[RMDB]
RNA sequence: GGGAACGACUCGAGUAGAGUCGAAAACUCUGCCAAAUCUGUGUUCACAAGGAGUCCGAGCCCAGCUCUAAGGGUAGGUAAUGUUGUCAGAUCUAUAGAUCCCCUCAGAUUGGAAAAGAUCAUGCAUCCUCGUUCCUUAUGUCACACUAAAGUAGAACGUAUUUACGUGGUUCGCCACGUAAAUACGAAAAGAAACAACAACAACAAC
Reactivity to 2A3 in 0.01 (KOAc 150mM, MgCl2 10mM, bicine 150mM(pH8.5), 24C), signal-to-noise 3, nucleotides 027 to 156: c010u030c040u080g100c050c030a010a120a180u120c060u050g030u000g060u130u070c050a030c030a060a040g010g000a030g010u040c040c010g030a040g040c030c000c020a020g030c100u050c050u170a110a220g020g000g010u030a040g040g100u110a140a050u080g050u110u040g120u110c030a020g010a060u000c040u030a100u060a240g090a160u080c030c020c030c030u070c030a040g030a130u020u130g040g050a050a140a010a000g030a010u070c020a080u070g000c000a030u040c000c030u010c010g020u020u010c000c000u000u020a050u060g050u060c030a030c020a030c080u150a070a050a030g090u100a020g060a070a000
Reactivity to DMS in 0.01 (KOAc 150mM, MgCl2 10mM, bicine 150mM(pH8.5), 24C), signal-to-noise 1, nucleotides 027 to 156: c070u000c000u000g000c070c020a060a100a090u010c000u020g010u000g020u010u000c060a090c040a100a170g000g000a020g020u000c100c040g000a140g060c060c010c000a160g030c110u000c020u000a040a140g020g050g030u000a020g010g020u000a080a160u030g000u010u000g020u010c000a230g030a050u020c010u010a100u020a210g020a070u000c060c030c010c020u000c040a050g000a200u000u010g040g030a120a100a130a110g010a070u000c040a120u000g010c060a120u000c050c040u010c020g000u000u000c010c000u000u000a040u020g000u000c020a030c030a060c060u000a020a110a120g020u010a030g010a070a300